[RMDB]
RNA sequence: GGGAACGACUCGAGUAGAGUCGAAAAAUUUUGACACCAUCGGCAACCACGCUCCCAUCUACAGGUGGCGUUUGACCUGGCUUUGGUGUUGGGUGCACGAACGUACAUGCUGGAUUCAUACAGUUUGGACCUCUUUCUGAUUCGUCAGAAAGAGGUCAAAAGAAACAACAACAACAAC
Reactivity to 2A3 in 0.01 (KOAc 150mM, MgCl2 10mM, bicine 150mM(pH8.5), 24C), signal-to-noise 2, nucleotides 027 to 126: a000u110u210u110u100g030a000c020a000c030c000a050u040c000g020g030c050a000a020c020c010a040c070g010c020u030c030c020c030a110u100c140u220a070c020a080g000g040u010g020g020c000g000u040u020u030g010a040c000c020u030g090g030c040u140u040u190g060g000u100g070u010u060g040g040g000u070g000c070a010c090g070a110a010c010g020u100a040c000a060u120g020c000u030g000g060a100u040u140c040a040u130a230c030a090g090u040u120u260g130
Reactivity to DMS in 0.01 (KOAc 150mM, MgCl2 10mM, bicine 150mM(pH8.5), 24C), signal-to-noise 2, nucleotides 027 to 126: a100u000u000u010u020g010a030c060a040c030c010a040u010c020g010g000c060a050a100c110c100a060c030g000c030u000c120c010c000a070u010c080u000a130c160a030g000g030u010g010g000c030g000u000u000u000g010a080c110c030u000g000g000c070u000u000u000g010g020u000g000u000u000g030g000g020u000g000c070a140c020g020a050a040c060g000u000a110c080a050u000g000c020u000g000g010a110u010u020c130a110u020a080c130a050g010u000u000u010g010

Annotation: The record gives the reactivity of an RNA of 177 nucleotides to 2A3 and DMS. Values cover nucleotides 27 to 126. 2A3 adducts were read by reverse transcription with SuperScript II with manganese. It was measured as part of the RMDB library OK2TRN. For DMS, 1,554 sequencing reads were counted. For 2A3, 1,378 sequencing reads were counted.